[RMDB]
Structure probing data (2A3 and DMS) for a 207-nucleotide construct. For DMS, 1,728 sequencing reads were counted. High DMS reactivity at an A or C suggests that its Watson-Crick edge is free. The 2A3 profile rests on 2,928 reads. 2A3 adducts were read by reverse transcription with SuperScript II with manganese. It was measured as part of the RMDB library M2RFPK.

RNA sequence: GGGAACGACUCGAGUAGAGUCGAAAAAGUCAGUGGUCCGACUUACGAGUCGAACCACUGACAUGGCAGCUGGAUCCAGCCAGGCGGUGUAUCGCCAAACCCAGCCAAUCAAUCUACCCACCGGGAAUACAGAAAGCGAACUUCGGUUCGCUUUCAAGUUUAUGUCAUGGUUCGCCAUGACAUAAACAAAAGAAACAACAACAACAAC
Reactivity to 2A3 in 0.01 (KOAc 150mM, MgCl2 10mM, bicine 150mM(pH8.5), 24C), signal-to-noise 4, nucleotides 027 to 156: a000g010u010c000a000g000u000g000g010u020c030c000g010a020c000u060u030a080c300g100a030g000u000c000g000a000a000c000c000a000c000u000g010a000c000a000u010g000g020c020a020g000c000u000g000g000a090u100c120c040a010g020c000c020a030g010g000c030g060g000u200g090u170a140u290c010g000c000c000a000a000a030c010c010c000a000g040c030c020a030a060u150c010a010a090u040c050u130a110c020c020c050a110c080c140g050g010g060a090a010u170a130c040a050g010a010a010a000g000c000g000a000a000c000u030u040c080g090g000u010u000c000g000c000u000u000u000c000a000a000
Reactivity to DMS in 0.01 (KOAc 150mM, MgCl2 10mM, bicine 150mM(pH8.5), 24C), signal-to-noise 1, nucleotides 027 to 156: a140g050u000c030a030g030u000g050g030u000c000c000g010a040c000u020u010a120c230g040a030g060u010c010g010a000a020c000c000a020c000u000g000a000c000a100u000g010g000c040a160g150c000u000g060g030a080u040c060c030a180g000c020c030a100g000g020c000g030g040u010g010u000a110u000c020g010c000c010a010a070a020c050c000c000a020g040c010c030a070a060u010c110a060a080u000c060u010a280c030c010c000a150c080c020g020g040g000a130a200u000a040c090a180g010a000a020a010g000c000g000a010a000c000u010u030c300g050g030u000u010c050g010c020u000u010u000c000a050a130